[RMDB]
RNA sequence: GGGAACGACUCGAGUAGAGUCGAAAAUGGUAGUCCGCCACUCUAAGGGGACGCCUUUAGAAGAAGAGGCUAGGUGGUAUUCGGGUGUGGGAUACUUGGUAAUAUGUAACGCUAAUUGCAUAAGAUUAAAACUUUGCAUACUUCGGUAUGCAAAGAAGUAUUAGUUCAACUUCGGUUGAACUAAUACAAAAGAAACAACAACAACAAC
Reactivity to 2A3 in 0.01 (KOAc 150mM, MgCl2 10mM, bicine 150mM(pH8.5), 24C), signal-to-noise 6, nucleotides 027 to 156: u110g030g010u040a110g040u010c020c040g080c100c050a100c030u160c050u120a110a160g000g010g000g010a020c020g040c000c000u070u100u070a100g010a140a010g020a030a010g020a010g040g010c030u050a030g000g040u020g010g030u080a120u080u140c060g010g000g010u080g010u050g030g020g000a030u040a100c020u020u050g040g010u030a050a040u050a080u140g040u040a030a010c030g000c100u060a110a070u090u050g000c020a020u040a130a050g030a070u090u200a040a110a030a050c000u010u000u000g000c000a000u000a000c000u000u000c020g060g000u000a000u000g000c000a000a000a000g000a010a000
Reactivity to DMS in 0.01 (KOAc 150mM, MgCl2 10mM, bicine 150mM(pH8.5), 24C), signal-to-noise 3, nucleotides 027 to 156: u000g040g030u000a070g010u000c010c040g050c050c040a180c070u000c060u000a090a090g000g010g020g010a110c170g020c010c030u000u000u010a050g020a100a100g010a110a100g000a120g010g020c020u000a060g030g010u000g020g010u000a130u010u000c120g020g010g040u010g030u000g000g000g010a110u000a040c050u000u000g010g010u010a050a110u000a060u000g020u010a030a070c070g010c090u000a070a120u000u000g010c010a070u000a050a120g020a180u000u000a020a090a130a160c010u000u000u000g000c000a020u000a010c010u000u010c290g060g010u000a010u010g020c000a010a000a010g000a030a130
This 207-nucleotide RNA was probed chemically with 2A3 and DMS. Values cover nucleotides 27 to 156. The RNA was probed in 150 mM KOAc, 10 mM MgCl2 and 150 mM bicine (pH 8.5) at 24 C. Reactivities are rounded to 0.1 and cut off at 0 and 3. For 2A3 the reverse transcriptase was SuperScript II with manganese.